This 177-nucleotide RNA was probed chemically with DMS. The RNA was probed in 150 mM KOAc, 10 mM MgCl2 and 150 mM bicine (pH 8.5) at 24 C. For DMS the reverse transcriptase was MarathonRT. The data come from the RNA Mapping Database (RMDB), library TTRDES.

[RMDB]
RNA sequence: GGGAACGACUCGAGUAGAGUCGAAAAAAGAUAUGGACUGAAGGGAGAAAUACGGGGUGCGACGAUCUUCGCUCGGAAACGAGCGAAGGGAGCACAAGUAUUUCGAAGAACUUCAGUCCUAAGUCAACGCUAAAAUAAGCUUCGGCUUAUUUUAGCGAAAAGAAACAACAACAACAAC
Reactivity to DMS in 0.01 (KOAc 150mM, MgCl2 10mM, bicine 150mM(pH8.5), 24C), signal-to-noise 1, nucleotides 027 to 126: a120a170g020a050u010a300u030g000g000a000c010u000g020a030a020g000g000g000a110g120a020a000a020u000a000c000g040g010g060g040u040g000c000g030a090c300g020a030u000c000u000u000c000g010c000u020c010g040g000a070a020a190c000g100a020g020c000g020a000a010g010g020g010a010g030c000a000c010a080a060g010u000a000u000u000u010c010g010a100a090g000a100a130c010u000u000c010a000g000u010c000c000u010a020a020g010u000c020a140a200